[RMDB]
RNA sequence: GGGAACGACUCGAGUAGAGUCGAAAAUACAGUUACAUGGGUGAUACAAAAUACUUCCCUCCAAUGGACAGAGUUAAACAACAAAUGUCUCUCAUCACCAGAUCAGAAAACGACUGUCUUAUGUUUGCCCUUCGUAGUUAUUUUUACAAUGGUACAGGGAGCAAUAAUAAUUCGUUAUUAUUGCUCCAAAAGAAACAACAACAACAAC
Reactivity to 2A3 in 0.01 (KOAc 150mM, MgCl2 10mM, bicine 150mM(pH8.5), 24C), signal-to-noise 3, nucleotides 027 to 156: u130a010c050a050g050u040u040a060c060a130u120g000g020g030u040g010a030u090a180c100a030a120a090a030u200a160c140u120u120c030c020c000u060c060c090a090a110u120g000g000a000c000a010g010a000g050u070u120a170a110a050c040a090a000c020a030a260a040u030g040u000c010u000c000u000c050a070u010c000a020c050c010a010g020a080u070c030a040g060a050a110a020a040c050g150a110c000u000g030u010c000u020u090a060u080g070u050u100u070g010c010c020c000u010u040c040g000u000a030g030u070u040a080u040u240u000u030u020a050c040a070a020u110g040g030u140a040c060a040g270
Reactivity to DMS in 0.01 (KOAc 150mM, MgCl2 10mM, bicine 150mM(pH8.5), 24C), signal-to-noise 2, nucleotides 027 to 156: u000a060c060a080g000u000u000a050c110a180u000g000g020g060u010g020a090u000a300c090a100a050a030a160u000a070c080u000u000c020c020c010u010c040c090a060a120u000g020g000a060c050a080g030a240g010u000u000a080a040a100c050a040a060c070a050a090a130u000g010u010c050u000c050u000c050a060u010c020a090c030c020a070g000a110u000c040a180g010a110a060a080a090c050g000a040c010u000g000u000c040u010u000a070u000g010u000u000u000g020c000c020c000u010u020c040g030u000a070g000u000u000a090u010u000u020u000u000a060c050a080a070u000g000g000u000a040c080a160g010